[RMDB]
RNA sequence: GGGAACGACUCGAGUAGAGUCGAAAAACAGCCCUUUCAUGAAGGUAAUGCUAGUCUUCUGUCCAUCAGUGCCAUUUCCUGUAGAACUAAAGGCUGUUCCAAGAAUGUGGGGUGGGGAAAGUAAAUGCUAAGACUAAAAUGUGGUGAGUCUGUGGGACUGGUCACCAUUAUUCGUAAUGGUGACCAGAAAAGAAACAACAACAACAAC
Reactivity to 2A3 in 0.01 (KOAc 150mM, MgCl2 10mM, bicine 150mM(pH8.5), 24C), signal-to-noise 1, nucleotides 027 to 156: a010c020a000g020c030c000c000u070u120u110c190a200u070g030a090a040g030g000u050a080a000u050g030c110u140a100g060u030c050u060u100c000u230g050u060c070c050a180u160c010a060g010u030g070c000c010a000u000u000u000c020c000u010g010u010a100g010a170a160c030u030a050a030a030g010g000c000u000g000u000u000c010c010a070a020g110a060a150u120g040u090g090g010g010g050u050g010g000g030g000a010a100a000g030u050a010a130a000u070g000c010u090a120a030g050a080c060u050a000a000a210a000u130g020u070g000g000u060g000a050g010u070c000u080g000u010g000g050g000a000
An RNA of 207 nucleotides, treated with 2A3 and read out base by base. For 2A3 the reverse transcriptase was SuperScript II with manganese. The reactions ran in a buffer of 150 mM KOAc, 10 mM MgCl2 and 150 mM bicine (pH 8.5), at 24 C.